[RMDB]
RNA sequence: GGGAACGACUCGAGUAGAGUCGAAAAAGGUGAUUCGCCGGAAGAAUUAUUACAAAAUAUAUAUGCACAUAUAAAAGAAACAUGGAUUUUUUAAGGAGGAGUUAUCAUGCCAACAGUUAUAUUAACAUAUAUUAGGACGUUUCGACGUCCUAAUAUAAAAAGAAACAACAACAACAAC
Reactivity to 2A3 in 0.01 (KOAc 150mM, MgCl2 10mM, bicine 150mM(pH8.5), 24C), signal-to-noise 2, nucleotides 027 to 126: a000g040g020u030g030a140u110u010c010g030c070c060g040g000a040a000g010a040a130u030u070a030u090u110a180c060a000a160a100a040u240a030u010a000u020a030u130g100c070a080c020a020u180a070u110a060a130a000a000g050a040a140a000c070a030u130g020g080a120u000u010u000u000u080u130a030a130g050g010a000g010g020a010g010u030u000a010u040c050a050u160g080c010c000a000a050c030a100g010u100u040a090u060a060u300u110a140a000c010a010
Reactivity to DMS in 0.01 (KOAc 150mM, MgCl2 10mM, bicine 150mM(pH8.5), 24C), signal-to-noise 2, nucleotides 027 to 126: a100g000g020u000g010a040u010u010c000g040c030c020g010g020a120a200g000a050a050u000u000a040u040u000a150c010a090a030a080a060u050a090u060a030u020a050u010g000c050a060c040a040u020a050u020a070a030a050a130g000a100a070a070c090a040u000g000g000a040u010u010u000u020u080u020a110a160g000g000a040g000g000a040g000u000u010a010u000c020a060u000g030c000c060a050a090c140a040g000u010u000a040u030a030u010u010a020a090c040a130